[RMDB]
RNA sequence: GGGAACGACUCGAGUAGAGUCGAAAACAAUGGCAGCGGUGGUAGACAGGCUCAUCAUCAGGCUUCUGGGUGGCUUGUGUGGCAUUGAUGAUGACAGUAGUGGAAUGGGCCAGCCAUUGGGCCUCCACGUCUUCACUUAGUUCGCUAAGUGAAGACGAAAAGAAACAACAACAACAAC
Reactivity to DMS in 0.01 (KOAc 150mM, MgCl2 10mM, bicine 150mM(pH8.5), 24C), signal-to-noise 3, nucleotides 027 to 126: c040a010a020u000g000g010c020a130g020c070g010g040u000g010g010u000a050g010a080c100a090g010g010c090u010c020a020u010c010a070u010c010a030g010g000c080u000u000c050u000g010g010g020u000g000g010c060u020u000g020u000g030u010g010g000c000a070u000u000g010a030u000g010a050u000g010a080c140a110g010u000a100g010u000g010g000a300a110u010g010g000g010c010c010a100g000c000c030a040u010u000g020g010g010c040c010u010c040c020a050
Reactivity to 2A3 in 0.01 (KOAc 150mM, MgCl2 10mM, bicine 150mM(pH8.5), 24C), signal-to-noise 2, nucleotides 027 to 126: c000a010a070u050g000g000c000a030g020c070g100g010u050g080g140u070a030g030a100c030a050g060g070c020u020c030a030u010c000a010u030c000a030g040g050c060u130u030c020u140g080g000g050u100g020g040c050u110u070g030u050g010u030g150g030c050a090u030u060g010a040u030g010a010u030g010a000c060a050g110u170a020g010u030g050g000a100a220u130g100g000g000c020c010a000g030c000c000a010u010u050g020g000g020c030c000u070c040c020a020

Background: The data come from the RNA Mapping Database (RMDB), library OK2TST. The record gives the reactivity of an RNA of 177 nucleotides to DMS and 2A3. The DMS profile rests on 3,957 reads. Reactivities are given for positions 27 through 126. The 2A3 profile rests on 2,375 reads. For 2A3 the reverse transcriptase was SuperScript II with manganese.